[RMDB]
RNA sequence: GGGAACGACUCGAGUAGAGUCGAAAAACCAAUGGAGGGUGAGCCUUGUGUAGUUUAGUCUGCUGUUACAUGGUUUAAGUUUGAGUGGGUUUGGUUAUAGUCUAUGUGGCGAUUCAAGAUUGGUACAGGACGAACAUUCGUUCGCGGAUGUUCGUCCAAAAGAAACAACAACAACAAC
Reactivity to DMS in 0.01 (KOAc 150mM, MgCl2 10mM, bicine 150mM(pH8.5), 24C), signal-to-noise 4, nucleotides 027 to 126: a100c010c020a080a080u030g010g010a180g000g010g010u000g000a090g010c050c020u000u000g020u010g030u020a050g010u010u000u000a100g010u030c060u010g030c050u020g000u010u020a030c070a090u010g010g030u000u040u010a050a090g010u010u000u010g020a060g020u010g000g010g020u000u010u000g000g010u000u000a070u020a070g030u000c020u000a070u030g020u000g010g010c050g010a070u010u000c060a070a090g000a130u000u000g000g020u020a050c140a150
Reactivity to 2A3 in 0.01 (KOAc 150mM, MgCl2 10mM, bicine 150mM(pH8.5), 24C), signal-to-noise 5, nucleotides 027 to 126: a000c020c000a010a010u070g010g010a020g040g030g020u080g010a010g000c000c000u070u030g020u020g040u050a070g020u010u060u040a070g020u000c020u060g060c020u030g060u110u090a040c040a090u090g040g010u040u050u060a070a070g020u040u080u110g070a040g010u040g010g000g000u070u030u040g030g000u020u050a080u090a070g020u000c030u020a060u100g050u050g030g000c000g010a030u060u010c030a030a000g040a040u010u040g040g010u070a020c040a050

The data come from the RNA Mapping Database (RMDB), library OK1LIB.
Structure probing data (DMS and 2A3) for a 177-nucleotide construct.
The DMS profile rests on 8,238 reads.
The 2A3 profile rests on 5,390 reads.